[RMDB]
RNA sequence: GGGAACGACUCGAGUAGAGUCGAAAACAGCCCGCUCAUUGGGGUCAAUACUGAGGUGUGGGCCCAAAUGUAAAACCAAAAUUGAAGAAUUAGAAUAAUACAUCUUGGUUGGCCGAUGCAAGGCAUCCACUGGAGUAGAAUUCGUUCUACUCCAGUGAAAAGAAACAACAACAACAAC
Reactivity to DMS in 0.01 (KOAc 150mM, MgCl2 10mM, bicine 150mM(pH8.5), 24C), signal-to-noise 5, nucleotides 027 to 126: c160a160g000c010c020c020g020c160u000c030a030u000u000g010g010g010g000u000c020a050a070u000a040c030u010g030a160g040g030u000g040u000g000g010g000c010c000c010a000a020a010u000g010u010a070a100a070a050c070c050a010a020a050a060u000u010g010a140a150g010a240a100u000u010a130g000a150a150u010a080a100u010a110c060a010u000c020u000u000g000g000u000u000g010g020c030c060g010a060u010g010c110a070a130g010g000c030a050u000c070
Reactivity to 2A3 in 0.01 (KOAc 150mM, MgCl2 10mM, bicine 150mM(pH8.5), 24C), signal-to-noise 3, nucleotides 027 to 126: c010a010g080c000c000c010g030c070u040c000a050u010u020g050g010g020g000u020c010a000a020u060a070c030u070g070a130g260g000u000g010u030g010g000g000c000c000c000a010a010a000u060g010u070a080a060a050a040c010c000a010a080a050a100u130u160g070a120a060g020a080a120u180u140a160g100a130a060u240a160a030u130a110c010a040u000c030u050u040g020g040u030u040g080g000c030c040g010a010u060g030c060a110a020g130g000c000a030u050c030

Source information
The record gives the reactivity of an RNA of 177 nucleotides to DMS and 2A3. The data come from the RNA Mapping Database (RMDB), library OK2TRN. The RNA was probed in 150 mM KOAc, 10 mM MgCl2 and 150 mM bicine (pH 8.5) at 24 C. Values cover nucleotides 27 to 126. Reactivities are rounded to 0.1 and cut off at 0 and 3.